[RMDB]
RNA sequence: GGGAACGACUCGAGUAGAGUCGAAAACGCAGCAGCACGAGAGCGACCCAUUUGCUGGCAGACAAUCCAGUCUCAUUACAAGGCAAACGUGAUGGGGCUGUUUUCUGCGCUUAACCCCGUCUUCCAAUAGGAUGUGACAGUUCGCUGUCACAUCCUAAAAAGAAACAACAACAACAAC
Reactivity to 2A3 in 0.01 (KOAc 150mM, MgCl2 10mM, bicine 150mM(pH8.5), 24C), signal-to-noise 2, nucleotides 027 to 126: c060g030c000a030g010c000a000g040c040a040c080g110a120g020a010g070c060g040a060c000c000c000a000u010u000u050g010c000u010g050g010c040a010g000a030c050a000a070u020c040c000a050g020u010c000u010c000a000u000u010a040c040a060a120g200g010c030a080a040a030c090g000u010g000a000u000g000g000g000g000c000u000g020u000u020u020u000c000u040g010c010g000c000u060u050a060a040c000c010c000c030g040u020c100u080u030c030c000a020a090
Reactivity to DMS in 0.01 (KOAc 150mM, MgCl2 10mM, bicine 150mM(pH8.5), 24C), signal-to-noise 2, nucleotides 027 to 126: c060g000c040a110g000c100a060g020c070a020c050g010a180g010a070g000c010g000a080c000c030c030a160u000u040u000g020c010u000g000g040c010a020g000a090c270a020a060u000c150c010a000g010u000c010u000c000a000u010u000a000c000a120a130g010g070c240a100a080a050c230g000u000g000a000u000g010g000g000g010c000u010g000u000u030u000u000c050u000g000c000g000c080u030u000a090a070c020c070c010c010g010u100c140u060u000c090c020a020a160